[RMDB]
RNA sequence: GGGAACGACUCGAGUAGAGUCGAAAAGAUAUGGACAUCUCCCCACCCCAAAAAUUGUGAGUCUUGGAUUUAAGCUCGGAAACGAGCUUUGUCAGACUUGCAAUUUUUGGGAGGAUGUCCUAAGUCACUAUCAAGAUUUGUUCGCAAAUCUUGAUAGAAAAGAAACAACAACAACAAC
Reactivity to 2A3 in 0.01 (KOAc 150mM, MgCl2 10mM, bicine 150mM(pH8.5), 24C), signal-to-noise 2, nucleotides 027 to 126: g030a110u240a110u300g010g010a000c000a020u040c050u090c030c010c000c000a050c020c000c010c000a000a000a010a000a000u010u010g010u000g040a000g020u000c150u220u300g160g020a120u300u300u250a000a000g030c000u000c020g060g000a040a070a050c010g000a010g000c030u020u000u010g040u010c000a020g000a010c030u020u000g000c000a010a000u000u010u000u020u000g000g020g010a000g000g000a000u010g000u000c000c000u020a130a040g030u040c060a010
Reactivity to DMS in 0.01 (KOAc 150mM, MgCl2 10mM, bicine 150mM(pH8.5), 24C), signal-to-noise 2, nucleotides 027 to 126: g000a160u010a160u010g030g000a010c000a020u000c010u020c220c000c000c060a300c160c020c010c000a000a000a000a010a000u000u000g000u010g000a010g000u000c000u000u000g020g010a000u000u020u000a010a010g020c000u010c000g000g000a090a070a280c000g010a010g000c000u000u000u000g020u000c010a020g000a010c010u020u000g010c000a020a000u000u000u010u000u000g010g000g020a010g000g000a020u000g010u000c000c010u000a040a120g000u020c170a250